An RNA of 177 nucleotides, treated with 2A3 and DMS and read out base by base. Source: RMDB library RFM100, as collected in RNAgym.
[RMDB]
RNA sequence: GGGAACGACUCGAGUAGAGUCGAAAAUAUCGGAUUCUGUGGUGAGCCGCCCACGAAGUUGAACUAGAAAUUUAGCCCACUUUACACAAGAAGGGCGGGCGGAGGCGCGUUUGAGCCCUGGGGACGGCCAUGGUGGGAGAUUCGUCUCCCACCAUGGAAAAGAAACAACAACAACAAC
Reactivity to 2A3 in 0.01 (KOAc 150mM, MgCl2 10mM, bicine 150mM(pH8.5), 24C), signal-to-noise 2, nucleotides 027 to 126: u150a070u060c030g010g030a000u060u000c040u080g010u020g020g090u040g000a030g040c020c000g020c020c010c000a010c060g020a130a010g130u150u220g040a090a040c080u060a160g080a080a230a090u280u210u040a070g020c000c000c000a040c000u000u030u190a170c110a020c010a120a030g070a070a120g000g020g000c060g000g020g000c060g060g060a060g000g020c040g010c000g060u010u120u060g040a010g000c000c000c000u000g000g000g000g000a010c000g000g030
Reactivity to DMS in 0.01 (KOAc 150mM, MgCl2 10mM, bicine 150mM(pH8.5), 24C), signal-to-noise 2, nucleotides 027 to 126: u000a100u030c040g000g010a070u020u000c000u000g010u000g000g020u020g000a060g010c020c000g000c020c020c030a140c130g000a040a060g000u050u020g000a030a250c050u050a060g000a080a100a070u010u000u010a170g000c020c020c050a120c030u000u000u000a140c230a100c250a080a090g000a070a090g000g010g020c080g000g010g040c050g000g000a060g010g010c010g000c070g040u010u020u000g000a040g000c040c020c010u000g040g000g000g000a020c080g000g000

About this RNA:
DMS adducts were read by reverse transcription with MarathonRT. 2A3 adducts were read by reverse transcription with SuperScript II with manganese. Conditions: 150 mM KOAc, 10 mM MgCl2 and 150 mM bicine (pH 8.5), 24 C.